[RMDB]
RNA sequence: GGGAACGACUCGAGUAGAGUCGAAAAAGCGCGCAAUGUGUACAUGGGUAUUCCCCCAUAUCUGUGUACUAUAGCUGAGAGGACUUUUUGGGUGGUGUGUGCAGUGCAAGUGUAUUUGGUGCGCGAAGUGUAUAUAAAUAUUCGUAUUUAUAUACACAAAAGAAACAACAACAACAAC
Reactivity to DMS in 0.01 (KOAc 150mM, MgCl2 10mM, bicine 150mM(pH8.5), 24C), signal-to-noise 8, nucleotides 027 to 126: a090g010c030g000c040g010c030a100a060u010g010u010g010u000a000c010a010u000g000g000g010u000a010u010u030c040c010c000c020c080a300u000a000u000c010u000g010u010g000u000a010c010u010a080u020a110g000c030u010g000a120g010a120g010g010a090c050u000u000u030u010u020g010g000g020u010g000g000u000g000u010g020u010g010c040a050g010u010g000c060a050a070g010u010g010u010a060u010u010u010g000g020u000g000c030g020c030g000a050a100
Reactivity to 2A3 in 0.01 (KOAc 150mM, MgCl2 10mM, bicine 150mM(pH8.5), 24C), signal-to-noise 9, nucleotides 027 to 126: a000g060c030g000c010g000c020a050a120u150g060u030g000u090a000c000a010u010g010g000g000u010a020u080u180c010c000c000c000c000a000u010a000u010c000u000g020u000g000u010a010c010u080a020u080a040g020c040u050g030a020g020a030g110g040a110c030u050u070u040u140u100g040g000g000u050g020g000u020g010u010g010u010g020c030a030g010u010g030c010a050a060g030u020g030u100a120u060u100u100g060g000u030g000c030g000c010g050a090a060